[RMDB]
RNA sequence: GGGAACGACUCGAGUAGAGUCGAAAACCGUUCUUUCGAGAACGGAAAAAGGGGUCAACGUUGAUCGUCACAUUCGCGAGGAUCCUGAAGCCUCCACGGGGGAGCGAAUGGACGGGAGUUGACGGAGGCACCCAAAAAAGCGCUAUUCGUAGCGCAAUCAGUGAUUAUGAUUCGUCAUAAUCACUGAAAAAGAAACAACAACAACAAC
Reactivity to DMS in 0.01 (KOAc 150mM, MgCl2 10mM, bicine 150mM(pH8.5), 24C), signal-to-noise 2, nucleotides 027 to 156: c000c000g040u000u000c010u000u000u000c230g000a070g010a030a000c000g020g020a000a020a040a130a100g010g000g050g010u010c010a050a070c000g030u000u010g010a050u000c000g000u010c000a160c010a040u010u000c000g040c000g010a150g050g000a040u010c030c020u000g000a100a160g020c040c020u010c010c050a300c070g000g000g010g000g000a160g020c000g030a000a030u000g000g010a020c000g000g010g000a100g030u000u010g010a020c000g030g000a120g000g010c040a130c010c000c010a010a040a090a070a100a190g010c010g010c000u000a090u000u000c240g010u000a030g030c010g010c000a030a060
Reactivity to 2A3 in 0.01 (KOAc 150mM, MgCl2 10mM, bicine 150mM(pH8.5), 24C), signal-to-noise 4, nucleotides 027 to 156: c000c000g010u000u010c010u010u080u120c190g130a030g000a010a010c030g020g040a060a060a000a020a030g010g000g020g000u010c000a010a010c020g070u090u020g030a060u220c020g000u020c030a060c000a300u000u000c000g000c010g040a230g070g000a000u000c010c000u040g070a070a050g110c010c070u060c070c010a050c030g010g000g000g000g010a000g000c000g000a010a010u000g000g000a000c000g000g010g000a040g010u010u020g000a000c010g010g000a010g010g000c040a300c020c050c180a080a050a010a000a020a000g020c000g000c000u030a030u090u140c240g130u080a000g000c000g000c010a000a040

Structure probing data (DMS and 2A3) for a 207-nucleotide construct. For 2A3, 4,645 sequencing reads were counted. For DMS, 5,406 sequencing reads were counted. For DMS the reverse transcriptase was MarathonRT.